[RMDB]
RNA sequence: GGGAACGACUCGAGUAGAGUCGAAAACUAUCGUGACUUGAAAAAAGAGACAGACGAUGCACUGAGAGUAUUCUCACAAACAAAUGAUACGGAUACAAUUUUAAUGCGCAGUUAUGAAGAGUAUAAAUAGUGUUAACAGGUUCGCCUGUUAACACUAAAAAGAAACAACAACAACAAC
Reactivity to DMS in 0.01 (KOAc 150mM, MgCl2 10mM, bicine 150mM(pH8.5), 24C), signal-to-noise 3, nucleotides 027 to 126: c020u020a060u010c050g050u010g000a100c030u000u010g000a000a070a060a030a080a100g000a060g000a090c170a070g000a040c070g000a090u040g000c090a070c120u010g000a060g010a100g000u040a020u000u000c010u030c040a100c080a060a070a060c240a020a120a100u000g030a050u020a070c130g000g010a050u000a020c050a060a060u010u010u010u000a050a050u020g000c040g010c060a070g010u000u000a040u020g030a080a060g010a110g000u020a020u000a010a060a080
Reactivity to 2A3 in 0.01 (KOAc 150mM, MgCl2 10mM, bicine 150mM(pH8.5), 24C), signal-to-noise 4, nucleotides 027 to 126: c030u060a110u110c010g090u040g110a120c020u050u090g160a080a060a040a020a030a040g100a020g040a010c010a040g070a010c020g030a040u090g010c070a020c050u080g050a030g000a000g060u080a040u090u000c020u040c000a030c000a070a110a020c090a000a100a080u200g030a020u060a170c050g030g000a010u030a150c040a080a090u010u040u080u120a070a060u070g030c100g000c080a020g030u030u080a100u200g060a080a030g030a010g150u100a060u030a140a100a090
This 177-nucleotide RNA was probed chemically with DMS and 2A3. Values cover nucleotides 27 to 126. Source: RMDB library OK1LIB, as collected in RNAgym. For 2A3 the reverse transcriptase was SuperScript II with manganese. The RNA was probed in 150 mM KOAc, 10 mM MgCl2 and 150 mM bicine (pH 8.5) at 24 C.